An RNA of 177 nucleotides, treated with DMS and read out base by base.
The RNA was probed in 150 mM KOAc, 10 mM MgCl2 and 150 mM bicine (pH 8.5) at 24 C.
For DMS, 1,356 sequencing reads were counted.

RNA sequence: GGGAACGACUCGAGUAGAGUCGAAAAAGUUUAAGAUGGAAACAUAUUACAAGAUAUUUACUCUUGUUAGGUGAAAGUUGAUGGUCGCCGAGCCAGUCCGUACAUCCAAAAAGGACUCUAUGUAGUAACUCCACGAAAACUUCGGUUUUCGUGGAGUAAAAGAAACAACAACAACAAC
Reactivity to DMS in 0.01 (KOAc 150mM, MgCl2 10mM, bicine 150mM(pH8.5), 24C), signal-to-noise 1, nucleotides 027 to 126: a000g020u010u000u000a020a060g030a040u000g020g000a150a060a170c010a060u040a070u020u010a000c000a000a060g000a000u040a080u020u030u020a060c130u000c040u010u000g000u010u000a090g000g010u000g000a060a040a090g040u000u040g000a050u010g030g020u010c030g010c060c070g030a050g000c050c100a030g010u000c080c040g000u000a020c190a090u010c050c070a000a100a010a090a110g000g000a010c070u000c100u010a050u000g000u000a130g010u020a080